The record gives the reactivity of an RNA of 177 nucleotides to DMS and 2A3. For DMS, 3,243 sequencing reads were counted. It was measured as part of the RMDB library VIROID. 2A3 is a SHAPE reagent: it acylates the 2'-hydroxyl of flexible nucleotides of all four kinds.
RNA sequence: GGGAACGACUCGAGUAGAGUCGAAAACUGGCGCCGGCUGGGCAACAUUCCGAGGGGACCGUCCCUCGGUAAUGGCGAAUGGGACCCAGAAAUCUCUCUAGAUUCCGAUAGAGAAUCGAGAGCUGGCCCAAACAUGUAAGUUCGCUUACAUGUUUGGAAAAGAAACAACAACAACAAC
Reactivity to DMS in 0.01 (KOAc 150mM, MgCl2 10mM, bicine 150mM(pH8.5), 24C), signal-to-noise 4, nucleotides 027 to 126: c050u000g020g010c150g020c000c010g000g010c020u000g010g000g010c060a130a080c010a010u000u000c000c000g010a020g010g000g010g000a140c300c300g010u030c010c000c000u000c000g000g000u020a000a000u000g010g020c130g010a080a090u010g010g010g010a140c050c000c010a030g000a090a130a130u020c010u000c010u000c010u000a160g010a020u000u000c000c010g000a150u010a130g010a140g000a010a000u000c000g000a040g000a010g000c050u000g000g010c060
Reactivity to 2A3 in 0.01 (KOAc 150mM, MgCl2 10mM, bicine 150mM(pH8.5), 24C), signal-to-noise 2, nucleotides 027 to 126: c020u030g190g010c100g000c050c010g020g000c000u000g020g020g040c030a020a010c000a020u040u000c000c020g000a000g020g010g020g090a210c070c060g300u300c020c010c000u000c000g000g000u000a000a010u010g020g030c090g120a050a080u100g050g010g130a120c000c000c000a010g020a030a060a010u090c010u000c010u000c020u040a090g000a010u020u000c010c020g120a190u130a240g160a020g000a020a000u020c020g000a000g000a010g000c010u040g010g000c000